[RMDB]
RNA sequence: GGGAACGACUCGAGUAGAGUCGAAAAAAAAAAAGAUAUGGACUGCCUACCCACCGCAGGAGCGCCGAGCUAUCUCGGAAACGAGAUAGUAUCGCUCACCUGCGAGGGCAGUCCUAAGUCAAAAAAACAUGAUCUAAUGGUUCGCCAUUAGAUCAUGAAAAGAAACAACAACAACAAC
Reactivity to DMS in 0.01 (KOAc 150mM, MgCl2 10mM, bicine 150mM(pH8.5), 24C), signal-to-noise 2, nucleotides 027 to 126: a000a010a030a030a050a120a210g000a090u010a260u000g020g000a040c000u000g000c010c000u000a100c030c010c030a300c120c010g000c000a020g000g010a070g060c250g010c300c090g000a090g000c010u000a000u000c000u000c000g020g010a070a060a090c000g010a010g000a020u010a010g010u020a040u000c010g020c020u000c030a120c020c010u030g000c020g020a070g000g010g000c010a000g000u000c000c000u000a000a080g010u010c060a010a010a070a040a080a070a160
Reactivity to 2A3 in 0.01 (KOAc 150mM, MgCl2 10mM, bicine 150mM(pH8.5), 24C), signal-to-noise 1, nucleotides 027 to 126: a010a000a000a020a010a000a000g290a170u300a210u200g020g000a020c000u010g010c000c000u090a180c120c000c010a000c000c010g000c000a000g050g000a060g040c080g040c150c300g010a020g020c000u010a020u000c010u010c000g010g000a090a000a020c010g000a010g010a020u010a010g000u020a300u060c000g000c000u020c010a080c010c010u000g000c000g000a020g000g000g060c000a000g000u000c020c000u010a000a000g000u030c010a000a000a000a000a040a140a140